[RMDB]
The record gives the reactivity of an RNA of 177 nucleotides to DMS and 2A3. Source: RMDB library OK2TRN, as collected in RNAgym. Reactivities are given for positions 27 through 126. The reactions ran in a buffer of 150 mM KOAc, 10 mM MgCl2 and 150 mM bicine (pH 8.5), at 24 C.
RNA sequence: GGGAACGACUCGAGUAGAGUCGAAAACUUCUGGCGUAAUGACCCUUUCGGCGGCACAUCCAGUGUAUUGCUGCCCGUUACGUGAACGAGAACCCAUUUUGCGUCUGGCGAAGUCGGCACUGGUGACCAUUCUUCCCCACUUCGGUGGGGAAGAAUGAAAAGAAACAACAACAACAAC
Reactivity to DMS in 0.01 (KOAc 150mM, MgCl2 10mM, bicine 150mM(pH8.5), 24C), signal-to-noise 3, nucleotides 027 to 126: c100u010u000c020u010g010g010c040g000u000a040a050u000g000a150c070c060c070u000u000u000c100g030g020c010g000g000c010a030c300a130u010c060c100a070g030u000g010u010a120u010u000g010c010u000g010c040c000c040g010u020u000a030c020g040u010g010a120a100c170g010a080g000a100a160c030c010c020a170u000u000u020u000g020c050g010u000c030u000g020g000c040g000a060a060g000u000c070g000g010c020a030c020u000g010g020u000g010a140c140
Reactivity to 2A3 in 0.01 (KOAc 150mM, MgCl2 10mM, bicine 150mM(pH8.5), 24C), signal-to-noise 1, nucleotides 027 to 126: c030u050u040c010u070g050g000c000g000u020a050a050u040g120a180c010c020c000u030u200u090c040g020g000c000g020g000c010a040c010a010u080c080c040a090g040u030g010u140a130u100u080g010c000u020g000c010c020c020g010u000u020a010c010g030u040g120a110a000c080g020a030g030a080a070c050c000c020a040u170u090u080u070g040c050g050u100c040u120g070g050c020g030a060a020g010u040c020g000g000c030a000c030u030g010g000u050g030a000c000
Background
2A3 adducts were read by reverse transcription with SuperScript II with manganese. DMS adducts were read by reverse transcription with MarathonRT.